[RMDB]
RNA sequence: GGGAACGACUCGAGUAGAGUCGAAAAAUCCUCGCGGACGCCGCUCUCGGAGCCGACGCGAACGAUCCGAUCGGGAUCGACGAUGUCCGCGAGUUGCUCGAGCAGCGCCUCGAGGACGUUGUCGACGACCGUUUUAGUACUUCGGUACUAAAACGGUAAAAGAAACAACAACAACAAC
Reactivity to DMS in 0.01 (KOAc 150mM, MgCl2 10mM, bicine 150mM(pH8.5), 24C), signal-to-noise 4, nucleotides 027 to 126: a110u000c040c010u000c020g010c050g000g000a190c030g020c080c080g010c060u000c080u020c130g010g010a050g040c020c060g020a090c070g020c030g000a060a110c090g000a050u000c030c000g010a100u030c160g010g000g010a120u000c000g000a030c010g020a030u000g010u000c010c000g010c000g010a040g010u000u000g020c020u000c030g000a130g020c170a080g010c050g010c170c000u000c000g000a030g010g010a000c020g010u010u010g000u000c010g010a200c250g010
Reactivity to 2A3 in 0.01 (KOAc 150mM, MgCl2 10mM, bicine 150mM(pH8.5), 24C), signal-to-noise 3, nucleotides 027 to 126: a000u020c000c010u000c010g020c000g020g040a120c030g050c100c020g000c030u030c020u070c100g210g040a010g010c020c010g030a040c020g040c000g020a060a010c040g010a040u010c030c010g150a230u210c110g120g010g080a090u050c000g000a000c010g040a050u070g020u040c020c010g020c000g010a000g010u030u070g010c000u010c030g110a060g040c100a020g050c010g000c010c010u000c000g000a010g020g000a000c010g000u010u010g040u000c020g010a040c030g010